[RMDB]
RNA sequence: GGGAACGACUCGAGUAGAGUCGAAAAGGUGUUACGUAGUGGUACCCACGAGAAAUCAAGUAUAUGGGCUAUGGGGAUAGUACGAUCGCAAGAUUGAAACUUGAAGAAAUUGACGGAAGGACACCACCAAUCUACCAUACUUCGGUAUGGUAGAUUGAAAAGAAACAACAACAACAAC
Reactivity to 2A3 in 0.01 (KOAc 150mM, MgCl2 10mM, bicine 150mM(pH8.5), 24C), signal-to-noise 5, nucleotides 027 to 126: g010g000u040g030u070u060a070c080g030u080a040g050u020g080g050u100a090c010c030c020a030c050g050a050g080a050a130a020u070c030a020a040g050u030a110u030a050u230g070g040g000c020u020a060u090g070g000g000g030a000u010a030g040u030a040c030g010a040u040c010g000c030a020a030g020a030u000u100g030a150a060a020c010u030u040g020a040a010g060a050a130a050u110u080g040a030c000g010g040a040a020g060g000a010c000a000c030c000a000c010
Reactivity to DMS in 0.01 (KOAc 150mM, MgCl2 10mM, bicine 150mM(pH8.5), 24C), signal-to-noise 5, nucleotides 027 to 126: g010g010u000g010u000u000a080c110g020u000a110g010u010g000g010u010a110c060c020c020a140c130g000a100g010a090a150a090u000c060a060a100g000u000a090u010a100u010g010g000g020c040u000a030u000g000g010g000g000a110u000a030g000u000a130c040g010a040u000c020g000c250a050a100g010a040u000u000g000a080a070a070c020u010u010g010a070a070g010a030a060a120u000u000g010a080c050g010g010a210a070g000g010a040c030a030c020c040a130c210